[RMDB]
This 177-nucleotide RNA was probed chemically with DMS and 2A3. As a SHAPE reagent, 2A3 marks flexible, mostly unpaired nucleotides at the ribose 2'-OH. It was measured as part of the RMDB library OK2TST. For 2A3 the reverse transcriptase was SuperScript II with manganese. For DMS the reverse transcriptase was MarathonRT.
RNA sequence: GGGAACGACUCGAGUAGAGUCGAAAAAUUGGAACACACCACAAACUUCUCAGCUGAAUUAGAGAAAAAUGGUGUUCAAGCUAGUUACAUAGCGAGUUACAGAACCAUAAUAGAUGAAAUUCAGGAAGGUGGAGUAUAAUUUCGAUUAUACUCCACCAAAAGAAACAACAACAACAAC
Reactivity to DMS in 0.01 (KOAc 150mM, MgCl2 10mM, bicine 150mM(pH8.5), 24C), signal-to-noise 4, nucleotides 027 to 126: a080u010u000g010g010a080a090c050a050c050a030c010c000a060c100a120a150a140c180u000u000c000u000c020a110g010c130u000g010a050a070u000u000a120g000a060g000a020a040a060a210a040u000g010g020u010g000u000u010c140a050a260g010c000u000a020g000u010u020a080c170a200u000a020g010c020g000a180g040u000u000a040c060a090g020a130a160c010c020a050u010a070a070u010a130g010a140u020g000a080a050a060u000u000c030a010g030g020a140a090
Reactivity to 2A3 in 0.01 (KOAc 150mM, MgCl2 10mM, bicine 150mM(pH8.5), 24C), signal-to-noise 2, nucleotides 027 to 126: a010u070u050g010g000a020a020c000a020c000a000c060c000a010c020a050a120a050c050u030u000c010u020c000a030g040c050u030g020a110a060u090u090a140g000a010g030a080a020a000a010a020u050g000g010u020g000u030u050c010a010a000g000c000u010a000g010u080u050a060c060a130u000a030g010c000g010a010g020u030u010a040c050a070g030a060a010c020c000a020u100a150a090u130a280g110a040u130g090a070a050a080u060u040c020a020g160g030a060a050